Chemical mapping of a 207-nucleotide RNA with 2A3 and DMS. It was measured as part of the RMDB library M2RFPK. DMS adducts were read by reverse transcription with MarathonRT.

[RMDB]
RNA sequence: GGGAACGACUCGAGUAGAGUCGAAAAGAAUCACCGUACCUAUUUAGGUUUACGCUCCAAGAUCGGUGGAUAGCAGCCCUAUCAAUGUCUAGGAGAACUGUGCUAUGUUUAGAAGAUUAGGUAGUCUAUUACACAGCCAUGUUCGCAUGGCUGUGAACACACCUCAUACCUUCGGGUAUGAGGUGUGAAAAGAAACAACAACAACAAC
Reactivity to 2A3 in 0.01 (KOAc 150mM, MgCl2 10mM, bicine 150mM(pH8.5), 24C), signal-to-noise 2, nucleotides 027 to 156: g020a000a060u070c000a020c070c020g050u020a010c000c000u030a160u220u180u280a030g030g000u070u050u070a060c040g050c020u000c040c000a040a020g000a150u070c030g040g000u030g030g010a030u070a050g020c060a010g000c010c000c000u040a050u020c050a080a090u190g060u070c010u030a040g000g010a030g010a060a040c070u060g020u020g060c030u050a030u090g110u080u150u090a170g030a150a010g000a090u060u050a050g010g020u050a050g080u010c030u000a090u020u090a040c020a000c020a000g000c000c000a030u000g030u000u050c140g000c100a000u000g000g000c030u000g000u000g000a000a000
Reactivity to DMS in 0.01 (KOAc 150mM, MgCl2 10mM, bicine 150mM(pH8.5), 24C), signal-to-noise 1, nucleotides 027 to 156: g000a120a080u000c000a170c020c000g020u000a070c000c010u000a160u000u020u000a020g040g000u000u010u000a060c090g010c000u010c020c010a090a110g030a040u000c040g060g070u010g030g010a070u000a100g000c000a130g010c100c060c000u000a030u010c060a070a080u000g030u000c050u010a130g000g010a130g000a030a070c070u000g020u000g020c000u000a080u000g000u000u000u000a130g000a080a120g000a080u000u020a080g010g060u000a070g000u010c030u010a120u020u000a170c000a030c010a000g030c020c000a020u000g000u000u000c300g030c030a010u000g020g000c040u000g030u000g010a000a130